Chemical mapping of a 177-nucleotide RNA with 2A3 and DMS. The 2A3 profile rests on 13,277 reads. The RNA was probed in 150 mM KOAc, 10 mM MgCl2 and 150 mM bicine (pH 8.5) at 24 C. The data come from the RNA Mapping Database (RMDB), library M2PK50.
RNA sequence: GGGAACGACUCGAGUAGAGUCGAAAAAUCCUGGCAUUCGUGCCAGGAUGUUUACCGAGAAAGUCCCUCGGUUUAAAAGGGCAACCCUUGGAAACAAGGGAAUAAUCGCAGUGUUCGCACUGCGAAACUCACCUAUAACAUUCGUGUUAUAGGUGAGAAAAGAAACAACAACAACAAC
Reactivity to 2A3 in 0.01 (KOAc 150mM, MgCl2 10mM, bicine 150mM(pH8.5), 24C), signal-to-noise 4, nucleotides 027 to 126: a000u000c000c000u000g000g000c000a010u030u050c210g090u060g010c000c000a000g000g000a000u000g000u000u060u050a060c000c000g000a030g050a080a130a010g120u040c000c000c000u010c010g010g000u020u060u110a040a050a020a010g010g000g010c020a030a080c000c000c000u010u000g000g020a030a050a020c010a000a010g000g010g010a000a020u070a010a020u010c000g000c010a000g000u000g050u060u090c140g050c070a000c000u000g000c000g000a010a000a000
Reactivity to DMS in 0.01 (KOAc 150mM, MgCl2 10mM, bicine 150mM(pH8.5), 24C), signal-to-noise 9, nucleotides 027 to 126: a010u000c000c000u000g000g010c000a040u000u010c190g020u000g010c000c000a010g000g010a000u000g000u000u000u000a140c010c000g000a090g010a060a070a090g020u000c010c010c000u000c030g010g010u010u000u010a040a070a070a060g000g020g010c060a210a150c000c000c000u000u000g000g000a160a120a170c000a010a000g000g000g010a070a030u010a090a130u000c010g010c000a010g010u000g010u000u010c210g020c010a010c000u000g010c000g000a000a030a080